[RMDB]
RNA sequence: GGGAACGACUCGAGUAGAGUCGAAAAGUUAAAAUCAUACGUGCAUACGAGCAUACGUGUGCACACAUAAAGUUGUCUGCUAUCACUGUAUGCGUAGAAAAGAGCGGUUCGCUGUAGCGCUCUUCGCCAUGAGUACCCCGUUCGCGGGGUACUCAUGAAAAGAAACAACAACAACAAC
Reactivity to DMS in 0.01 (KOAc 150mM, MgCl2 10mM, bicine 150mM(pH8.5), 24C), signal-to-noise 1, nucleotides 027 to 126: g090u000u070a010a050a060a170u190c140a030u010a050c170g110u080g000c000a070u000a030c040g000a300g000c190a120u010a060c000g050u000g020u000g060c000a000c090a080c080a110u000a100a120a020g000u010u000g000u000c080u040g000c020u000a040u090c020a090c140u020g000u000a000u000g000c000g000u120a080g030a090a130a010a000g000a030g000c000g000g040u050u040c060g000c050u010g000u000a010g030c000g010c010u010c000u000u000c160g000c100
Reactivity to 2A3 in 0.01 (KOAc 150mM, MgCl2 10mM, bicine 150mM(pH8.5), 24C), signal-to-noise 2, nucleotides 027 to 126: g100u150u140a000a070a200a190u130c060a020u090a050c120g010u020g040c020a000u020a000c020g000a250g150c100a070u170a170c000g050u000g000u000g020c010a010c060a020c060a010u300a010a090a030g000u070u040g070u120c030u090g000c020u100a020u170c020a060c150u180g020u040a000u070g050c020g000u030a010g020a100a140a000a000g020a000g000c000g110g050u210u090c120g030c210u290g090u130a000g010c060g000c000u000c000u000u000c080g010c020